An RNA of 177 nucleotides, treated with DMS and 2A3 and read out base by base. It was measured as part of the RMDB libraries RFM100 and RFMREP. DMS adducts were read by reverse transcription with MarathonRT.
[RMDB]
RNA sequence: GGGAACGACUCGAGUAGAGUCGAAAAUAUGUGGAUACGUUGAAGAGUUACGUGUAACUUGGUAUCGUCCACAGCCUGCAAAGCCUCACUAAACUUUCUGAAACAUUGAAAGAAGUGAAAAAUCACGUAGCUCAUCAGUUUUCGAACUGAUGAGCUAAAAAGAAACAACAACAACAAC
Reactivity to DMS in 0.01 (KOAc 150mM, MgCl2 10mM, bicine 150mM(pH8.5), 24C), signal-to-noise 3, nucleotides 027 to 126: u040a050u030g030u000g000g000a040u000a030c190g020u010u000g000a160a200g000a030g010u000u000a020c060g020u020g020u030a020a010c020u000u000g020g040u020a020u010c080g020u000c000c000a010c020a040g000c020c020u010g000c140a030a080a150g030c060c050u000c010a030c010u000a140a190a050c000u000u010u000c000u020g000a190a290a200c250a120u040u050g020a000a000a000g020a080a020g000u000g000a030a030a050a070a040u020c070a010c130g000
Reactivity to 2A3 in 0.01 (KOAc 150mM, MgCl2 10mM, bicine 150mM(pH8.5), 24C), signal-to-noise 1, nucleotides 027 to 126: u270a090u170g010u020g000g020a060u030a140c020g050u130u080g010a060a040g010a040g060u030u050a000c100g070u060g010u060a030a030c000u010u010g010g070u190a000u090c110g020u000c010c000a010c010a000g010c000c000u040g010c040a020a040a100g040c000c010u030c000a010c000u030a000a100a040c010u010u000u000c030u000g010a010a070a000c010a070u080u080g020a010a040a010g010a040a010g000u000g040a170a000a000a000a000u070c010a000c020g070